[RMDB]
RNA sequence: GGGAACGACUCGAGUAGAGUCGAAAAGAUUAUGUGGGAGAGGCGCCCUUUCGUUUCAUCGGAUAAUUAAUUGCCAGUCGCUGGCUUUAGCGAUGUUGAUGUCAUCUGUAGCGAUGACUAUGCUACGUUAAGGUAUGAUCCGGAUACCCCCGGUAAAGCCUAUUUACGUAUUCGUACGUAAAUAGGCAAAAGAAACAACAACAACAAC
Reactivity to DMS in 0.01 (KOAc 150mM, MgCl2 10mM, bicine 150mM(pH8.5), 24C), signal-to-noise 2, nucleotides 027 to 156: g010a080u000u000a070u010g040u000g000g000g000a130g010a090g030g000c060g010c060c020c020u000u010u030c030g010u000u000u020c030a090u000c030g000g000a180u010a070a150u010u000a070a140u020u020g000c090c020a140g010u010c040g010c030u000g020g030c050u010u000u010a030g000c030g020a300u000g030u010u000g010a200u000g000u000c030a030u000c020u000g000u000a160g030c150g030a060u010g000a020c040u000a160u010g000c030u000a280c030g030u010u000a020a020g000g020u010a090u000g000a060u000c020c060g020g010a140u000a230c030c010c010c000c000g050g000u000a060a110a190
Reactivity to 2A3 in 0.01 (KOAc 150mM, MgCl2 10mM, bicine 150mM(pH8.5), 24C), signal-to-noise 2, nucleotides 027 to 156: g040a030u150u120a060u260g130u090g020g030g000a040g010a030g000g040c020g010c020c020c020u030u110u050c060g020u050u080u100c080a080u050c010g050g020a000u040a110a040u300u090a070a120u200u140g000c040c030a030g140u130c030g060c230u040g060g010c010u030u000u060a000g000c000g000a030u040g050u010u060g040a040u090g010u000c000a010u000c020u100g300u300a030g070c050g060a000u020g010a000c010u020a010u090g000c000u010a060c030g020u040u020a010a010g010g000u040a070u090g050a070u040c000c000g010g010a020u090a060c010c010c000c000c000g000g020u020a030a000a000